[RMDB]
This 177-nucleotide RNA was probed chemically with 2A3. The reactions ran in a buffer of 150 mM KOAc, 10 mM MgCl2 and 150 mM bicine (pH 8.5), at 24 C. It was measured as part of the RMDB library OK1LIB.
RNA sequence: GGGAACGACUCGAGUAGAGUCGAAAAUUGCUGCAAGAGCAUUUUUAUUAGCAUCAUUCCCAGUAGCAAUGACUGCUUGGACUCAACCAGGUGUUAACUGGAUAGGUAAAAAUUUAGAUGCAGUUACCGGGACCAUCGGAUUCGUCCGAUGGUCCCGAAAAGAAACAACAACAACAAC
Reactivity to 2A3 in 0.01 (KOAc 150mM, MgCl2 10mM, bicine 150mM(pH8.5), 24C), signal-to-noise 1, nucleotides 027 to 126: u030u000g000c000u000g030c030a130a000g000a000g300c000a000u060u000u000u000u000a100u000u040a080g140c110a000u110c040a000u070u000c000c000c000a060g000u060a070g010c180a270a300u300g040a170c000u000g030c000u010u080g000g000a000c100u000c070a000a000c030c010a000g140g000u000g170u110u210a280a070c000u000g000g000a010u100a200g000g010u100a000a100a000a000a080u060u160u190a040g010a000u110g060c040a000g070u080u080a140c030